[RMDB]
RNA sequence: GGGAACGACUCGAGUAGAGUCGAAAAGAUAUGGAACGGAGUGGACAUGAUGGGGUGUCGGAAACGACACCGACAUCAACAGCCACUUCCGUUCCUAAGUCAAAACCGCCUUGUUCGCAAGGCGGAACGUACGGACGAGGUUCGCCUCGUCCGUACGAAAAGAAACAACAACAACAAC
Reactivity to DMS in 0.01 (KOAc 150mM, MgCl2 10mM, bicine 150mM(pH8.5), 24C), signal-to-noise 1, nucleotides 027 to 126: g000a000u000a270u000g000g000a020a020c000g000g000a000g010u000g010g000a050c150a150u010g040a020u000g000g000g000g010u000g010u000c000g020g020a080a050a100c010g010a040c010a010c000c000g010a080c000a000u000c020a090a060c300a260g000c000c000a020c000u000u000c000c000g060u010u010c000c000u000a000a100g020u000c040a100a060a110a190c000c000g020c020c000u000u000g000u000u000c180g030c030a000a020g000g040c040g000g030a000a030
Reactivity to 2A3 in 0.01 (KOAc 150mM, MgCl2 10mM, bicine 150mM(pH8.5), 24C), signal-to-noise 1, nucleotides 027 to 126: g000a000u020a020u110g000g020a020a020c040g020g010a010g020u020g030g000a030c100a300u300g020a090u000g000g070g000g010u000g000u000c020g000g000a030a020a000c000g030a020c010a000c020c020g020a020c020a000u000c010a010a190c060a050g000c000c010a000c010u070u000c000c000g030u020u000c000c000u000a020a040g010u000c070a000a000a090a190c010c000g000c010c000u040u020g040u080u110c300g050c240a000a000g000g000c000g020g030a000a010
Source information: An RNA of 177 nucleotides, treated with DMS and 2A3 and read out base by base. For DMS the reverse transcriptase was MarathonRT. Values cover nucleotides 27 to 126. The DMS profile rests on 1,224 reads. The RNA was probed in 150 mM KOAc, 10 mM MgCl2 and 150 mM bicine (pH 8.5) at 24 C. It was measured as part of the RMDB library TTRDES.